An RNA of 177 nucleotides, treated with 2A3 and read out base by base. For 2A3 the reverse transcriptase was SuperScript II with manganese.
RNA sequence: GGGAACGACUCGAGUAGAGUCGAAAAUGAGCUAUCAUACGGGCUACAGACAACCCUUCUUUUGGAAUUUUGUCAGUUCCAUAAUAGUUUCCACCGUUCCAGUUCGGAUCGCCUACUAUUGAUUGGCGCGUUUUCCUCGUUUCGACGAGGAAAACGCAAAAGAAACAACAACAACAAC
Reactivity to 2A3 in 0.01 (KOAc 150mM, MgCl2 10mM, bicine 150mM(pH8.5), 24C), signal-to-noise 2, nucleotides 027 to 126: u150g000a010g060c000u010a000u120c030a140u100a050c080g070g030g030c000u120a100c050a100g030a000c020a040a210c010c000c000u070u030c130u110u100u040u080g050g000a100a110u080u000u000u070g190u080c130a040g000u060u070c010c000a010u100a100a040u090a050g050u020u060u050c030c050a040c000c020g000u110u100c020c000a020g060u210u120c060g040g050a090u030c030g000c010c010u020a120c080u070a180u180u090g030a210u130u040g090g020c000
Record summary:
Reactivities are given for positions 27 through 126. The data come from the RNA Mapping Database (RMDB), library OK1LIB. For 2A3, 553 sequencing reads were counted.